[RMDB]
RNA sequence: GGGAACGACUCGAGUAGAGUCGAAAAUGGUCUUGACCAUACACCUUUGGUGUAUGCGUAGCAAUCUUUUUUUAUCGCUUGUUUUUUAUAUCUUUUACCUUUGGAGAUGCAAUUGGGAGUAAACAAAUCAUAUUAUCGAAUUCGUUCGAUAAUAUGAAAAAGAAACAACAACAACAAC
Reactivity to DMS in 0.01 (KOAc 150mM, MgCl2 10mM, bicine 150mM(pH8.5), 24C), signal-to-noise 7, nucleotides 027 to 126: u000g000g010u000c060u000u000g010a080c090c010a010u000a010c000a010c000c010u010u000u020g030g050u000g000u000a000u000g010c150g020u000a070g020c100a080a060u000c000u000u000u010u000u000u010u000a070u020c100g010c070u000u000g000u000u000u000u000u010u000a050u010a060u050c010u000u000u000u010a130c050c030u000u010u000g000g000a090g010a060u000g010c070a040a090u000u000g010g010g010a110g000u000a050a060a070c110a050a070a150
Reactivity to 2A3 in 0.01 (KOAc 150mM, MgCl2 10mM, bicine 150mM(pH8.5), 24C), signal-to-noise 6, nucleotides 027 to 126: u060g020g020u040c020u050u110g040a040c010c010a010u000a000c000a000c000c000u070u070u300g030g000u000g000u000a010u020g020c060g000u010a020g070c020a040a090u100c000u130u110u060u030u010u130u130a130u130c050g020c040u060u030g050u130u120u040u030u090u040a150u030a030u100c020u060u130u050u090a100c000c010u050u040u080g050g030a170g020a050u070g040c020a040a050u060u020g060g010g020a050g060u120a070a090a040c050a030a080a090